[RMDB]
Chemical mapping of a 177-nucleotide RNA with DMS and 2A3. The RNA was probed in 150 mM KOAc, 10 mM MgCl2 and 150 mM bicine (pH 8.5) at 24 C. Reactivities are rounded to 0.1 and cut off at 0 and 3.
RNA sequence: GGGAACGACUCGAGUAGAGUCGAAAAGAAUGGCGAAAGCGAGGAGCUCCGGGUGGAUAUUUUUUCCCUGAACGUUCGGCAGGAAGCAUCCUUCGCGGGACCUGCACCGUGUUGGAUGCAAAAAGAAGUCUAGUAUAAUGUUCGCAUUAUACUAGACAAAAGAAACAACAACAACAAC
Reactivity to DMS in 0.01 (KOAc 150mM, MgCl2 10mM, bicine 150mM(pH8.5), 24C), signal-to-noise 4, nucleotides 027 to 126: g000a070a070u000g000g000c030g000a070a110a160g000c050g000a070g000g000a140g000c050u000c060c050g010g010g020u000g010g000a090u000a000u000u000u000u000u000u000c030c010c020u000g010a070a110c120g010u000u000c030g010g010c050a060g010g000a090a120g010c010a010u000c010c000u000u000c010g030c010g000g000g000a100c060c050u000g000c050a120c000c000g000u010g000u000u000g000g000a020u000g000c010a010a010a040a070a040g000a090a120
Reactivity to 2A3 in 0.01 (KOAc 150mM, MgCl2 10mM, bicine 150mM(pH8.5), 24C), signal-to-noise 3, nucleotides 027 to 126: g030a060a030u110g030g000c030g030a140a060a020g020c030g020a030g040g030a030g030c030u030c040c050g040g040g040u060g020g060a030u030a140u120u140u040u010u060u040c030c000c000u010g080a130a020c040g060u060u060c010g050g020c010a000g010g070a050a020g000c000a010u000c000c000u000u020c010g000c000g000g000g010a040c000c090u080g040c030a020c010c000g000u000g000u000u010g000g000a010u000g010c010a010a030a000a000a020g040a060a000